[RMDB]
RNA sequence: GGGAACGACUCGAGUAGAGUCGAAAAGAUAUGGAGGUCGCUCGUCCCGUAGCACAUCGGAAACGAUAGCUACCCGACGUGAGGCGACCUCCUAAGUCAAACCCUUAGAGGUUCGCCUCUAAGGGAAGCUAUGACUGAGCUUCGGCUCAGUCAUAGCAAAAGAAACAACAACAACAAC
Reactivity to DMS in 0.01 (KOAc 150mM, MgCl2 10mM, bicine 150mM(pH8.5), 24C), signal-to-noise 1, nucleotides 027 to 126: g000a050u000a300u000g000g000a050g000g000u010c000g010c000u000c030g030u000c040c050c180g030u000a010g010c000a100c270a080u000c020g000g000a070a100a130c010g000a000u000a110g030c000u000a010c000c010c230g000a010c000g000u030g010a110g000g010c000g000a010c010c010u010c000c000u000a000a090g000u000c020a100a150a200c010c000c000u000u010a000g020a010g030g000u000u050c300g000c000c000u000c000u000a010a010g000g000g000a000a030
Reactivity to 2A3 in 0.01 (KOAc 150mM, MgCl2 10mM, bicine 150mM(pH8.5), 24C), signal-to-noise 1, nucleotides 027 to 126: g000a040u020a070u110g000g010a020g000g000u010c000g000c040u110c140g160u030c000c030c040g020u010a000g020c040a080c020a300u010c010g020g030a080a060a080c020g010a010u000a010g070c000u010a010c000c060c090g080a060c020g140u240g220a140g070g020c000g000a000c000c000u010c010c000u010a000a000g010u050c030a060a010a230c000c000c000u000u000a020g000a010g040g010u070u070c260g060c030c010u000c010u000a000a000g010g000g000a000a020